[RMDB]
RNA sequence: GGGAACGACUCGAGUAGAGUCGAAAACCUCGCAUCGCAAGUUCGUGCUUGCGACUUACACGUAGAGCGAGGGGUGGGCGAAAGUUGCCAUGAGACCGUAACUUUCGUAGUCAUUGAUAAAGGGGCACAUGCCCUGACUAGUUCGCUAGUCAGGGAACGCGAUCUUGACGUUCGCGUCAAGAUCGCGAAAAGAAACAACAACAACAAC
Reactivity to 2A3 in 0.01 (KOAc 150mM, MgCl2 10mM, bicine 150mM(pH8.5), 24C), signal-to-noise 2, nucleotides 027 to 156: c000c000u020c030g000c000a030u000c000g000c000a000a020g000u290u280c170g140u300g130c050u000u000g000c000g000a000c000u050u090a040c130a010c040g190u160a040g010a000g060c000g010a000g000g020g000g040u090g030g000g000c010g020a000a000a000g000u000u000g030c040c050a050u130g090a040g000a160c070c060g050u020a000a000c000u000u000u010c020g000u000a040g030u000c000a050u000u190g070a020u150a170a080a030g040g000g000g050c070a030c040a190u100g030c000c000c060u000g000a020c000u000a000g000u080u040c190g000c090u000a000g000u000c000a000g000g000g020a000a000

Chemical mapping of a 207-nucleotide RNA with 2A3. The RNA was probed in 150 mM KOAc, 10 mM MgCl2 and 150 mM bicine (pH 8.5) at 24 C.